Chemical mapping of a 207-nucleotide RNA with 2A3 and DMS.
It was measured as part of the RMDB library M2RFPK.
For 2A3 the reverse transcriptase was SuperScript II with manganese.
For 2A3, 2,530 sequencing reads were counted.
RNA sequence: GGGAACGACUCGAGUAGAGUCGAAAAGAAAUUACGUUUCCUUUACACUUCUCAAACCGGGUUCAAGAGAAGCAAAGCAUCCCUCAUAUCCACGAUGGAGGGUGUCGUGGAGUAUACUGUACCAAAAAGAGCGAACACGGCUUCGGCCGUGUUCGAACUAAUCACCCAUGUUCGCAUGGGUGAUUAGAAAAGAAACAACAACAACAAC
Reactivity to 2A3 in 0.01 (KOAc 150mM, MgCl2 10mM, bicine 150mM(pH8.5), 24C), signal-to-noise 4, nucleotides 027 to 156: g040a000a070a000u190u080a050c070g000u010u020u050c000c000u040u050u070a050c040a020c020u080u030c020u050c030a130a160a100c090c060g130g000g050u120u090c090a140a010g010a000g020a030a010g010c030a060a060a000g030c010a060u070c010c030c000u070c040a080u110a050u100c000c010a000c040g010a020u030g060g060a040g040g080g000u030g010u000c000g000u000g000g000a020g030u010a010u010a040c110u110g090u160a060c000c090a010a040a030a080a050g100a030g090c010g000a000a000c000a000c000g010g000c020u050u060c190g060g000c020c000g010u000g000u000u000c000g000a000a000
Reactivity to DMS in 0.01 (KOAc 150mM, MgCl2 10mM, bicine 150mM(pH8.5), 24C), signal-to-noise 2, nucleotides 027 to 156: g010a030a050a090u000u000a090c130g000u000u000u010c030c020u000u010u000a190c060a090c040u000u000c000u000c010a110a120a120c080c060g060g020g030u000u000c040a140a300g000a040g020a030a030g000c040a050a100a140g020c090a070u000c020c000c030u000c060a080u010a080u000c050c050a020c040g010a080u010g020g020a060g030g000g030u000g030u000c020g020u020g030g000a080g010u000a100u000a060c090u000g010u010a120c130c030a050a070a080a130a120g000a140g000c010g000a020a030c000a020c020g010g020c020u000u000c300g080g060c030c000g020u000g000u000u000c000g030a010a040